Source: RMDB library 15KLIB, as collected in RNAgym. An RNA of 170 nucleotides, treated with 2A3 and DMS and read out base by base. The DMS profile rests on 49,871 reads. The 2A3 profile rests on 37,162 reads. DMS (dimethyl sulfate) methylates the pairing face of unpaired adenines and cytosines.
RNA sequence: GGGAACGACUCGAGUAGAGUCGAAAAGGAAGAAAAAGGGGUGGGCCCCCCCGAUCCGAGGGGCCCGACUGCCAAGUUUGGAGAGCACCUCGGGCCGAAGGGUUGAGUAGCACUCAAAGGGAGGAAUAGGCCUAACGGUUCGCCGUUAGGAAAAGAAACAACAACAACAAC
Reactivity to 2A3 in 0.01 (KOAc 150mM, MgCl2 10mM, bicine 150mM(pH8.5), 24C), signal-to-noise 7, nucleotides 027 to 129: g010g010a010a020g010a020a050a010a020a010g020g010g020g020u080g020g010g000c010c000c000c000c010c010c020g020a040u040c040c020g010a050g020g020g000g010c010c000c000g000a020c010u070g050c030c040a090a050g030u050u070u120g080g010a110g010a010g030c020a060c010c000u020c000g010g010g000c030c010g040a060a060g020g000g000u020u010g010a000g010u090a020g030c080a020c090u030c000a050a040a020g010g000g000a020g010g000a040a040u090a070g060g000
Reactivity to DMS in 0.01 (KOAc 150mM, MgCl2 10mM, bicine 150mM(pH8.5), 24C), signal-to-noise 9, nucleotides 027 to 129: g000g010a030a020g020a020a010a020a040a030g050g020g000g040u030g040g000g030c020c010c010c020c000c040c070g000a080u040c090c070g020a010g000g040g030g000c000c010c000g030a050c070u020g010c100c110a050a070g010u010u020u040g020g010a130g020a040g030c060a070c060c060u030c050g010g010g020c060c030g040a060a070g020g020g020u010u000g020a070g000u030a020g030c080a300c050u030c060a010a050a050g010g000g000a060g000g000a070a060u030a080g020g010